Source: RMDB library OK3TST, as collected in RNAgym.
This 207-nucleotide RNA was probed chemically with 2A3 and DMS.
Values cover nucleotides 27 to 156.
The RNA was probed in 150 mM KOAc, 10 mM MgCl2 and 150 mM bicine (pH 8.5) at 24 C.
For 2A3, 1,936 sequencing reads were counted.
DMS adducts were read by reverse transcription with MarathonRT.
RNA sequence: GGGAACGACUCGAGUAGAGUCGAAAAUCCAAUAUGUUUCCUACAGUGUCUGCAACACUACAGGUGCGUUUCAGAAUUAGAGACGUUAGAUCAAAAUAUUAUGAAAGAUAUUCUGAGAAGAUCUGAACAGCUUCAUAACCUACUAUUGGAAACUCUACUCCACUCUGUUAUUCGUAACAGAGUGGAGAAAAGAAACAACAACAACAAC
Reactivity to 2A3 in 0.01 (KOAc 150mM, MgCl2 10mM, bicine 150mM(pH8.5), 24C), signal-to-noise 4, nucleotides 027 to 156: u000c000c000a000a040u140a080u130g020u020u020u060c020c010u040a070c060a080g000u000g010u050c060u130g160c100a110a020c010a030c000u120a030c070a050g050g000u000g000c020g000u000u000u030c090a170g060a300a270u130u240a150g000a020g020a040c010g010u060u080a030g020a120u080c030a060a050a170a080u100a060u130u130a100u100g060a160a050a110g020a030u090a050u100u070c050u080g040a030g030a190a030g020a050u010c010u060g030a050a010c010a040g030c010u080u080c030a050u040a100a060c030c050u060a060c020u070a100u100u010g010g000a000a030a040c040u020c010u060a050
Reactivity to DMS in 0.01 (KOAc 150mM, MgCl2 10mM, bicine 150mM(pH8.5), 24C), signal-to-noise 1, nucleotides 027 to 156: u010c000c050a090a120u020a040u000g010u000u000u030c030c010u000a130c030a060g020u000g010u010c020u020g080c000a160a050c010a010c020u000a080c060a100g000g020u000g000c010g010u000u000u000c000a130g010a200a140u010u020a120g000a090g040a020c040g050u000u000a040g010a260u000c020a030a080a070a090u010a060u000u000a060u000g000a040a120a210g020a020u000a030u000u020c020u020g000a070g020a090a190g010a080u010c000u000g000a020a040c020a020g020c050u000u000c050a080u000a030a110c020c060u030a110c020u000a040u000u000g000g010a070a090a130c030u000c020u000a300